[RMDB]
RNA sequence: GGGAACGACUCGAGUAGAGUCGAAAAGAUAUGGAGAGUGGAGCGAUGUGGCAAUGAUGCGGGAAUACGAUCGGAAACGAUCGUAUUCCCGUUGAGCCACCUCUCGCGUUGAAACUCUCCUAAGUCAUCGAACAGUUAUGUUCGCAUAACUGUUCGAAAAAGAAACAACAACAACAAC
Reactivity to DMS in 0.01 (KOAc 150mM, MgCl2 10mM, bicine 150mM(pH8.5), 24C), signal-to-noise 3, nucleotides 027 to 126: g020a040u000a300u010g010g010a020g000a010g030u000g000g000a120g000c010g020a020u010g000u000g000g010c000a280a190u000g000a120u000g000c010g000g000g000a010a000u000a000c000g010a010u010c010g000g000a150a080a230c000g030a010u000c000g010u000a010u000u000c000c000c000g000u000u000g010a120g000c000c000a010c000c010u000c020u010c000g010c000g000u000u020g000a180a170a050c010u000c000u000c000c010u000a020a080g000u000c040a170